The data come from the RNA Mapping Database (RMDB), library OK2TRN. Chemical mapping of a 177-nucleotide RNA with 2A3 and DMS. Values cover nucleotides 27 to 126. For 2A3, 2,685 sequencing reads were counted.
RNA sequence: GGGAACGACUCGAGUAGAGUCGAAAAGCAGCCCCCGCGCCUGCUGAUGCCGGCGUGCCCGGCAGCACACCGCCAGCAGAGCUCGCAACGGCGCCGCAUGGAGACGCAGAUGAGCAUGCGGAUGCGCCUAUUUGACCGUGUUCGCACGGUCAAAUAGAAAAGAAACAACAACAACAAC
Reactivity to 2A3 in 0.01 (KOAc 150mM, MgCl2 10mM, bicine 150mM(pH8.5), 24C), signal-to-noise 2, nucleotides 027 to 126: g090c060a070g040c020c030c010c020c030g000c010g010c010c000u030g000c010u040g020a070u170g080c120c050g040g000c000g030u010g000c010c030c030g240g000c030a030g010c010a010c000a000c010c010g030c010c000a000g020c000a000g050a040g030c020u000c030g030c020a120a090c050g020g010c010g000c030c000g000c000a020u020g140g000a220g050a080c060g040c160a060g020a260u190g020a090g090c010a010u020g000c010g010g020a070u120g020c010g030c000
Reactivity to DMS in 0.01 (KOAc 150mM, MgCl2 10mM, bicine 150mM(pH8.5), 24C), signal-to-noise 5, nucleotides 027 to 126: g020c100a140g020c020c010c020c070c070g010c100g010c060c010u000g000c000u000g010a150u010g010c110c020g030g020c030g010u000g000c050c030c090g010g010c160a170g000c010a020c030a060c020c010g010c020c010a020g010c020a020g000a140g030c020u000c060g010c140a110a110c150g000g010c020g020c010c010g000c020a040u000g000g010a130g000a130c100g010c090a090g010a100u000g010a140g010c010a030u000g000c000g000g010a080u010g010c040g010c050